[RMDB]
RNA sequence: GGGAACGACUCGAGUAGAGUCGAAAAAAUACGUACGCCCCGGAUACGGUGGGAUACGAUCUUAUACGUGACUUGAUCCUUGUCAUACGAGCUCGUAACUAUGUCGAAGCGUCCCGCCGAUAUAGUCGUGUGAACACACAUUCGUGUGUGUUCACACAAAAGAAACAACAACAACAAC
Reactivity to DMS in 0.01 (KOAc 150mM, MgCl2 10mM, bicine 150mM(pH8.5), 24C), signal-to-noise 1, nucleotides 027 to 126: a060a020u000a080c110g010u000a090c110g010c040c010c020c030g000g000a100u010a080c040g000g040u000g020g030g000a130u010a070c010g010a040u010c020u010u000a080u020a040c110g000u000g020a110c030u000u000g000a080u000c080c100u000u020g000u010c070a050u000a100c050g000a010g020c080u040c000g000u000a070a030c120u000a030u000g020u010c040g030a140a130g000c130g000u000c000c010c000g000c050c020g010a000u000a000u000a060g000u000c280
Reactivity to 2A3 in 0.01 (KOAc 150mM, MgCl2 10mM, bicine 150mM(pH8.5), 24C), signal-to-noise 1, nucleotides 027 to 126: a030a000u130a020c000g030u020a020c120g140c000c000c010c010g020g010a090u110a130c020g000g000u020g020g000g020a000u000a000c020g000a030u030c040u080u050a070u020a090c090g010u020g080a120c010u020u040g040a060u060c000c040u090u160g060u200c020a030u080a170c080g010a020g020c000u000c020g000u060a130a100c010u030a060u140g020u020c050g080a100a000g110c000g080u020c040c000c030g000c000c000g000a020u020a040u030a010g100u070c050